[RMDB]
RNA sequence: GGGAACGACUCGAGUAGAGUCGAAAAGCCGGCAUGCGAAAGGAUGGAACCGUGGCCCAUCCGAAACGUACGUGAUCCACGAGCGCCGCCGCGCGGAUGGGAAAGCAUGCGCCAUCCGAAACGUACGAUUCGAACACCAGCUGGCGCGACCUGCGUCAUUGCCGUUUCAAUUCGUUGAAACGGCAAUAAAAGAAACAACAACAACAAC
Reactivity to 2A3 in 0.01 (KOAc 150mM, MgCl2 10mM, bicine 150mM(pH8.5), 24C), signal-to-noise 1, nucleotides 027 to 156: g020c000c050g000g010c060a060u060g010c010g070a080a010a000g010g010a010u010g000g010a060a100c130c060g010u050g030g000c000c010c000a000u010c000c000g000a050a100a000c030g020u050a010c020g010u020g050a190u040c080c030a030c090g090a050g120c100g000c070c020g070c080c080g000c010g000c000g000g000a000u000g000g000g090a000a090a130g070c100a130u300g050c040g000c020c000a000u000c000c010g020a060a110a010c010g000u020a020c010g030a030u000u050c000g060a100a000c060a050c100c020a020g020c030u010g020g000c000g000c010g060a180c030c050u120g000c030g070u050c030

Source information:
Chemical mapping of a 207-nucleotide RNA with 2A3. The RNA was probed in 150 mM KOAc, 10 mM MgCl2 and 150 mM bicine (pH 8.5) at 24 C. The 2A3 profile rests on 897 reads. Reactivities are given for positions 27 through 156.